The data come from the RNA Mapping Database (RMDB), library OK1LIB. The record gives the reactivity of an RNA of 177 nucleotides to DMS and 2A3. For 2A3, 1,216 sequencing reads were counted. 2A3 adducts were read by reverse transcription with SuperScript II with manganese. The DMS profile rests on 2,235 reads. DMS adducts were read by reverse transcription with MarathonRT.

RNA sequence: GGGAACGACUCGAGUAGAGUCGAAAAUAUUGGGGGGAUGAAUUAUCUGAAUAUGAGCAGGCUGUUUGUCAGAAACAUCGGUGAUCCAGUAACAUCAUCAAUUGCUGAUCUCAAGAGAAUGAUUCUCCUACACAGCCGGAUUCGUCCGGCUGUGUAGAAAAGAAACAACAACAACAAC
Reactivity to DMS in 0.01 (KOAc 150mM, MgCl2 10mM, bicine 150mM(pH8.5), 24C), signal-to-noise 2, nucleotides 027 to 126: u060a100u070u010g000g010g010g000g000g000a070u000g000a120a070u040u010a100u020c070u020g000a010a100u020a070u000g000a070g020c070a080g020g000c080u050g020u020u000u000g000u020c100a050g020a100a060a000c040a100u010c100g000g020u010g000a040u000c080c080a120g010u030a090a080c220a050u030c100a010u000c060a030a140u040u040g000c010u000g040a060u000c000u000c030a110a080g000a110g010a030a050u050g000a110u000u000c040u000c000
Reactivity to 2A3 in 0.01 (KOAc 150mM, MgCl2 10mM, bicine 150mM(pH8.5), 24C), signal-to-noise 3, nucleotides 027 to 126: u200a090u100u090g010g000g000g000g010g020a000u030g050a010a090u050u070a070u120c000u090g060a160a070u130a130u020g040a010g110c040a030g030g000c030u000g070u100u050u010g080u080c000a000g160a070a100a010c030a020u060c000g000g010u000g050a000u000c080c040a020g070u170a010a150c010a060u040c020a010u010c040a000a210u070u150g030c010u010g020a170u020c020u000c040a140a050g020a000g030a070a000u010g000a040u060u000c000u000c010